[RMDB]
RNA sequence: GGGAACGACUCGAGUAGAGUCGAAAAGAUAUGGACACUUAGUCCUUUUGACGAGUAUCGAGUCGGAAACGACUCGUAAGCUCGAUAAGGACAAGUGUCCUAAGUCAAAAGCUUACUUCGGUAAGCAGUACUGUAUUUAGUUCGCUAAAUACAGUACAAAAGAAACAACAACAACAAC
Reactivity to DMS in 0.01 (KOAc 150mM, MgCl2 10mM, bicine 150mM(pH8.5), 24C), signal-to-noise 9, nucleotides 027 to 126: g000a030u000a300u010g000g010a020c000a020c000u000u000a200g020u000c000c000u000u000u000u010g010a240c110g000a020g010u000a180u010c000g000a020g010u010c000g010g000a080a080a190c010g010a020c000u000c010g010u000a040a230g020c000u000c010g010a110u000a010a020g010g010a020c000a020a030g010u000g010u000c000c000u000a010a070g000u010c040a110a100a110a150g000c000u000u000a010c000u000u010c240g020g000u000a000a000g020c000a120
Reactivity to 2A3 in 0.01 (KOAc 150mM, MgCl2 10mM, bicine 150mM(pH8.5), 24C), signal-to-noise 9, nucleotides 027 to 126: g020a010u060a040u140g010g000a000c000a010c020u030u050a120g010u010c010c010u020u020u040u110g300a150c070g000a000g010u010a020u150c000g000a010g010u000c000g000g000a030a040a000c010g000a000c010u050c030g000u020a110a030g000c010u010c010g020a060u130a100a010g000g000a000c000a000a000g000u000g000u000c000c000u000a000a000g010u000c020a030a040a060a150g010c000u000u010a000c000u040u100c300g130g000u010a010a000g000c030a000